[RMDB]
The data come from the RNA Mapping Database (RMDB), library TTRDES. An RNA of 177 nucleotides, treated with DMS and read out base by base. DMS adducts were read by reverse transcription with MarathonRT. Conditions: 150 mM KOAc, 10 mM MgCl2 and 150 mM bicine (pH 8.5), 24 C.

RNA sequence: GGGAACGACUCGAGUAGAGUCGAAAAAAGAUAUGGAGGCACGGGAGAAAGGGGAUGGCAAUGAUGGGUCCUCGGAAACGAGGACCUUGAGCCAUCCCCUUUCGAAGAACGUGCCUCCUAAGUCAAAGUUGAUACACAUGUUCGCAUGUGUAUCAACAAAAGAAACAACAACAACAAC
Reactivity to DMS in 0.01 (KOAc 150mM, MgCl2 10mM, bicine 150mM(pH8.5), 24C), signal-to-noise 2, nucleotides 027 to 126: a090a080g010a040u000a300u010g000g000a020g010g000c000a010c000g000g030g020a120g010a000a010a000g040g010g010g010a010u000g010g030c000a250a110u010g010a120u000g010g000g000u000c010c010u010c010g000g000a060a050a160c010g010a020g000g000a010c000c000u000u000g000a050g020c000c010a000u010c000c010c000c000u010u000u000c000g000a060a090g000a090a120c010g000u000g010c020c000u000c000c000u000a010a080g030u000c030a100a090a120